[RMDB]
Description
Chemical mapping of a 177-nucleotide RNA with 2A3 and DMS. For DMS, 2,242 sequencing reads were counted. The data come from the RNA Mapping Database (RMDB), library TTRDEL. DMS adducts were read by reverse transcription with MarathonRT.
RNA sequence: GGGAACGACUCGAGUAGAGUCGAAAAGAUAUGGAACAGCUACCCACCAAGUUACUUCGUUGAAAUCGGAAACGAUGGAGAAGAACUUGAGGCUGUUCCUAAGUCAAAAGCAGAGUUCGCUCUGCAAGAAGGUAAUACACUUCGGUGUAUUACCUUCAAAAGAAACAACAACAACAAC
Reactivity to 2A3 in 0.01 (KOAc 150mM, MgCl2 10mM, bicine 150mM(pH8.5), 24C), signal-to-noise 2, nucleotides 027 to 126: g060a030u230a090u250g030g000a010a000c000a000g020c020u150a250c030c000c030a030c020c010a000a000g000u000u010a300c020u030u020c050g290u280u080g030a040a080a010u020c030g000g020a060a040a030c010g020a010u040g020g010a030g010a010a010g020a010a000c000u010u000g000a010g010g000c040u040g010u000u040c000c000u000a010a000g070u000c110a060a060a150a030g000c000a000g020a000g040u080u150c220g060c080u000c000u000g000c010a000a020
Reactivity to DMS in 0.01 (KOAc 150mM, MgCl2 10mM, bicine 150mM(pH8.5), 24C), signal-to-noise 3, nucleotides 027 to 126: g030a100u010a150u000g020g000a020a000c010a000g010c010u010a100c000c000c000a300c060c010a030a000g000u010u000a020c000u000u000c000g010u000u000g000a120a110a010u000c000g000g020a130a050a080c000g010a020u000g000g010a100g010a010a010g000a040a000c000u000u000g000a080g000g000c000u000g010u000u000c000c000u010a020a060g010u020c130a100a070a110a080g010c010a020g000a020g020u010u000c160g020c010u010c000u010g010c000a020a060